[RMDB]
An RNA of 207 nucleotides, treated with DMS and 2A3 and read out base by base. DMS adducts were read by reverse transcription with MarathonRT. It was measured as part of the RMDB library M2RFPK.

RNA sequence: GGGAACGACUCGAGUAGAGUCGAAAAACAUAGGCCAUGCUUACGAGCAUGGCCUAUGACGAAUCUCAAGCAAUCAAGCAUUCUACUUCUAUUGCAACACCGAGGAGCUUACGAGCUCCUCAGUGAAAAAAGAGAGUAAUGUUCGCAUUACUCUCAAGAUGUCAAAACAGUUCGCUGUUUUGACAUCAAAAGAAACAACAACAACAAC
Reactivity to DMS in 0.01 (KOAc 150mM, MgCl2 10mM, bicine 150mM(pH8.5), 24C), signal-to-noise 1, nucleotides 027 to 156: a140c020a050u000a000g030g040c000c000a030u000g000c020u000u010a100c260g020a080g010c020a030u000g020g000c000c010u000a000u020g000a070c050g020a130a070u000c030u000c030a070a130g020c040a090a120u000c170a080a090g010c020a180u000u000c100u010a040c020u000u000c050u000a040u020u010g000c000a060a230c020a000c000c010g010a000g000g020a040g000c010u000u030a100c300g020a080g020c000u000c010c010u030c000a000g010u000g000a010a070a060a120a120a150g010a010g010a040g000u000a000a030u000g020u010u010c300g010c020a060u000u000a010c010u000c000u000c000a000a040
Reactivity to 2A3 in 0.01 (KOAc 150mM, MgCl2 10mM, bicine 150mM(pH8.5), 24C), signal-to-noise 4, nucleotides 027 to 156: a000c000a020u000a000g010g000c000c000a020u000g000c000u120u060a090c300g090a020g010c000a000u000g000g010c000c000u000a000u000g000a010c000g030a020a050u010c010u000c040a030a020g020c000a020a030u080c020a030a060g000c030a140u170u070c030u100a090c040u070u040c030u090a040u040u070g010c020a080a040c000a030c010c010g000a010g000g000a010g010c020u060u060a090c240g110a030g000c010u000c010c000u000c000a000g000u000g000a060a000a000a000a000a020g000a000g000a000g000u000a010a000u000g020u050u070c110g000c060a000u000u000a000c000u000c000u000c000a000a000